[RMDB]
RNA sequence: GGGAACGACUCGAGUAGAGUCGAAAACGAGAGGCGAUCACCCACACUCUCUAAGCGAUUAUGUUUAGCACCCAUCUGCGCGCGGGCUAAGUUGACAUUGUCCAAAGCACGAUCAAUGCCACCAAGGAGCGGUGUAAAAAUUCGUUUUUACACCGCUAAAAGAAACAACAACAACAAC
Reactivity to DMS in 0.01 (KOAc 150mM, MgCl2 10mM, bicine 150mM(pH8.5), 24C), signal-to-noise 2, nucleotides 027 to 126: c090g020a080g000a080g030g020c090g020a110u000c090a140c050c010c020a160c060a070c050u000c050u000c020u010a070a080g010c060g000a110u010u010a060u020g010u010u000u000a080g000c090a180c000c010c020a070u000c070u020g020c070g000c040g000c130g000g000g030c050u000a040a100g040u020u000g020a050c040a050u000u000g010u020c030c050a070a090a090g020c050a040c060g000a020u010c040a070a050u000g000c030c030a090c070c100a060a100g010g000
Reactivity to 2A3 in 0.01 (KOAc 150mM, MgCl2 10mM, bicine 150mM(pH8.5), 24C), signal-to-noise 1, nucleotides 027 to 126: c000g000a010g020a030g220g200c100g060a090u150c130a050c020c010c010a010c010a000c010u060c000u010c020u040a080a040g050c030g050a040u050u090a160u300g080u000u030u070a030g000c010a030c000c000c000a040u030c010u060g070c080g000c030g000c050g050g000g000c020u070a110a040g060u060u070g060a030c000a050u000u100g000u030c010c000a140a000a050g070c030a020c030g040a020u040c050a000a050u090g000c010c010a090c000c070a070a030g120g050
This 177-nucleotide RNA was probed chemically with DMS and 2A3. The reactions ran in a buffer of 150 mM KOAc, 10 mM MgCl2 and 150 mM bicine (pH 8.5), at 24 C. For 2A3, 892 sequencing reads were counted.